An RNA of 177 nucleotides, treated with DMS and 2A3 and read out base by base. The reactions ran in a buffer of 150 mM KOAc, 10 mM MgCl2 and 150 mM bicine (pH 8.5), at 24 C. The 2A3 profile rests on 4,907 reads. For DMS, 4,158 sequencing reads were counted.

RNA sequence: GGGAACGACUCGAGUAGAGUCGAAAAGAUAUGGAGAAGCUCGAUAAGUCGUGUGUCGGAAACGACACCGACUUUUGACGAGCCUCCUAAGUCAAAAGGAGCAGGGAUCUUCGGAUCCCUGCUCCAAGGAUGUACAUUAGUUCGCUAAUGUACAUCCAAAAGAAACAACAACAACAAC
Reactivity to DMS in 0.01 (KOAc 150mM, MgCl2 10mM, bicine 150mM(pH8.5), 24C), signal-to-noise 3, nucleotides 027 to 126: g000a060u010a300u000g000g010a020g010a170a130g010c000u000c000g010a170u000a020a010g010u000c000g000u000g020u000g020u000c000g000g000a080a080a150c000g010a000c010a000c000c010g010a000c000u000u000u000u000g010a130c080g000a010g000c010c000u000c000c000u000a030a130g010u000c020a070a090a150a110g000g000a020g030c010a000g000g000g000a030u000c000u000u020c180g020g010a000u010c000c000c000u000g000c010u000c000c010a000a020
Reactivity to 2A3 in 0.01 (KOAc 150mM, MgCl2 10mM, bicine 150mM(pH8.5), 24C), signal-to-noise 3, nucleotides 027 to 126: g030a020u070a050u090g030g000a000g050a300a080g030c010u010c010g060a080u030a150a010g020u010c000g020u020g000u010g020u300c000g030g050a090a060a070c000g000a000c000a000c000c000g000a000c000u010u000u000u010g030a010c020g000a000g020c000c010u000c000c000u030a100a020g070u030c010a010a030a050a250g030g010a010g000c020a010g000g000g000a000u000c030u060u150c300g090g010a000u000c020c000c000u000g010c000u000c000c000a010a000